Background:
Chemical mapping of a 207-nucleotide RNA with 2A3. The data come from the RNA Mapping Database (RMDB), library OK3TST. The reactions ran in a buffer of 150 mM KOAc, 10 mM MgCl2 and 150 mM bicine (pH 8.5), at 24 C. 2A3 is a SHAPE reagent: it acylates the 2'-hydroxyl of flexible nucleotides of all four kinds. Values cover nucleotides 27 to 156.

RNA sequence: GGGAACGACUCGAGUAGAGUCGAAAAUAUUUAGGGUCCAUUUUGUGCAAAAAUAUGAAACACUGGAAGCUCUUCCAUCAAAGUCUUAUGGAGAGUGAGAUGAAUGGGGAGGCCUCCUUGAUUCAUGCCUCCUCGGCAUAAUCACUGAAUCAGACACGAACUAUGACCGAUUCGUCGGUCAUAGUUCAAAAGAAACAACAACAACAAC
Reactivity to 2A3 in 0.01 (KOAc 150mM, MgCl2 10mM, bicine 150mM(pH8.5), 24C), signal-to-noise 1, nucleotides 027 to 156: u290a050u050u170u190a070g000g000g020u000c000c000a030u010u030u090u050g020u060g010c080a050a050a030a140a070u150a040u180g060a060a090a020c050a060c080u060g030g070a060a050g000c020u000c020u150u070c010c000a000u000c040a060a080a070g100u060c070u120u080a020u020g040g000a040g040a060g010u050g070a060g020a020u140g070a220a090u080g030g000g030g000a000g000g090c000c050u120c000c010u020u070g090a040u140u110c170a030u070g000c010c000u040c010c000u000c000g000g000c000a020u050a040a050u090c010a000c050u040g030a020a000u020c000a020g000a010c010a000c050